[RMDB]
RNA sequence: GGGAACGACUCGAGUAGAGUCGAAAAACCGCAGCACCUGCUUGGCUGGCCUGGAUGAUCAGGUCUCGCACUUGUGUCUCGGCGCGGUCGAACAGGCUACGGAAGGCGCCGUCGGUCGCUCGGUCCGCACUUAUAUGAUAUUCGUAUCAUAUAAGUGAAAAGAAACAACAACAACAAC
Reactivity to DMS in 0.01 (KOAc 150mM, MgCl2 10mM, bicine 150mM(pH8.5), 24C), signal-to-noise 9, nucleotides 027 to 126: a090c020c000g020c120a060g010c080a120c030c010u010g000c050u010u010g010g000c020u010g010g000c010c000u020g000g010a070u020g000a130u030c020a020g000g010u000c020u030c220g010c100a040c030u010u000g010u010g010u010c010u010c300g010g000c040g010c030g000g000u000c010g010a030a060c060a050g000g000c060u010a080c040g010g020a110a080g000g000c050g000c020c010g010u010c070g000g000u010c040g010c020u010c080g000g000u010c020c050g000
Reactivity to 2A3 in 0.01 (KOAc 150mM, MgCl2 10mM, bicine 150mM(pH8.5), 24C), signal-to-noise 9, nucleotides 027 to 126: a000c010c010g010c040a010g010c020a040c020c000u040g020c020u070u060g050g000c020u020g020g010c000c000u060g050g030a130u140g040a100u240c010a010g010g010u000c030u060c090g050c020a050c040u030u030g010u010g020u050c010u010c050g020g000c110g000c010g060g000u010c000g000a040a020c010a060g020g000c020u060a030c040g100g060a100a070g090g000c040g000c030c010g080u080c060g020g020u070c030g010c030u030c040g050g050u020c010c010g020